[RMDB]
RNA sequence: GGGAACGACUCGAGUAGAGUCGAAAAGAGCGUCGAGAGACGAAGAGAAGUGCAUUGAUCCACAACGGAGAACGUAAUAAUGCACACAUGUGGUUUAGUGUCCGGAACAACGGGCACAAGAGGCAGAAUAAUCCUAGCAGUUCGCUGCUAGGAUUAUAAAAGAAACAACAACAACAAC
Reactivity to 2A3 in 0.01 (KOAc 150mM, MgCl2 10mM, bicine 150mM(pH8.5), 24C), signal-to-noise 5, nucleotides 027 to 126: g040a020g050c040g000u000c020g000a010g000a010g000a040c050g000a100a000g100a000g030a280a010g010u000g000c010a010u030u050g050a020u070c050c000a090c050a210a140c170g020g060a050g050a080a030c060g020u050a020a060u100a120a010u040g020c010a010c000a010c010a050u110g060u080g080g150u070u030u180a070g000u000g010u000c010c000g050g010a060a040c070a080a100c080g000g000g010c000a000c000a000a000g080a020g020g080c040a010g040a200
Annotation
Conditions: 150 mM KOAc, 10 mM MgCl2 and 150 mM bicine (pH 8.5), 24 C. Chemical mapping of a 177-nucleotide RNA with 2A3. Values cover nucleotides 27 to 126. For 2A3 the reverse transcriptase was SuperScript II with manganese.